[RMDB]
RNA sequence: GGGAACGACUCGAGUAGAGUCGAAAAACUCCAGAACCUCCUACCGAAUUAUCAGACUCUUUUAAAGAACUUCCACCGAUCAAUUCUCGUCAAACUAAUUCCAGUUUGGGUGGUAUUGGUGACUCUAACGUAGGAGUAUCUUCGGAUACUCCUACGUAAAAGAAACAACAACAACAAC
Reactivity to 2A3 in 0.01 (KOAc 150mM, MgCl2 10mM, bicine 150mM(pH8.5), 24C), signal-to-noise 5, nucleotides 027 to 126: a000c020u000c010c000a020g020a070a050c000c000u030c000c000u010a050c030c010g060a120a110u100u000a050u140c020a020g020a130c030u030c010u010u100u090u180a100a180a020g040a050a030c010u060u000c010c000a050c040c030g040a020u020c040a040a090u100u000c050u030c040g170u080c020a000a030a050c020u070a060a130u250u070c080c010a010g020u000u030u030g070g000g020u040g010g010u020a060u040u070g010g000u030g040a060c010u030c040u150a050
Reactivity to DMS in 0.01 (KOAc 150mM, MgCl2 10mM, bicine 150mM(pH8.5), 24C), signal-to-noise 1, nucleotides 027 to 126: a090c040u000c010c030a050g010a200a200c030c000u020c010c010u010a020c010c050g000a170a090u040u000a030u000c050a090g020a070c010u000c020u000u050u030u050a020a080a030g030a030a020c130u000u030c010c000a110c050c050g000a050u010c050a080a020u010u000c010u000c080g000u000c030a030a020a000c050u010a040a180u010u000c130c100a070g000u000u010u000g000g000g000u000g000g000u040a110u000u000g000g020u000g010a130c130u000c060u020a170